[RMDB]
RNA sequence: GGGAACGACUCGAGUAGAGUCGAAAAACGCUGCUGCAUAUAUGAAACUCUCGGAUGCACUUAAACGACAGAUUCGCAUUGCAUGCCGUAAGUGUAAUUUAGCUUUCCGGUUAACCACCUCAAAGCUCUAUAGAAGAUGCUUCGGCAUCUUCUAUAGAAAAGAAACAACAACAACAAC
Reactivity to DMS in 0.01 (KOAc 150mM, MgCl2 10mM, bicine 150mM(pH8.5), 24C), signal-to-noise 1, nucleotides 027 to 126: a030c060g060c040u000g000c020u000g010c030a050u010a080u000a020u000g020a050a090a100c060u000c100u000c010g010g010a150u000g000c110a070c160u000u000a020a050a150c010g000a010c120a060g000a150u000u000c070g020c060a050u000u000g030c030a040u000g030c000c050g000u010a070a090g030u000g000u010a020a120u000u000u000a060g020c010u000u010u000c030c040g000g000u000u000a070a050c150c090a170c010c050u000c120a030a060a080g010c030u010
Reactivity to 2A3 in 0.01 (KOAc 150mM, MgCl2 10mM, bicine 150mM(pH8.5), 24C), signal-to-noise 1, nucleotides 027 to 126: a000c000g000c030u030g000c000u030g000c030a010u000a020u020a000u140g070a100a070a040c020u020c000u040c020g050g000a040u070g000c030a050c020u070u190a080a070a030c020g080a020c050a040g100a070u100u050c020g020c060a010u000u140g020c040a020u070g110c020c000g040u040a070a030g000u020g010u100a120a150u030u080u070a010g000c020u000u010u000c040c000g000g010u040u020a020a000c050c020a020c000c000u010c040a080a080a010g000c000u000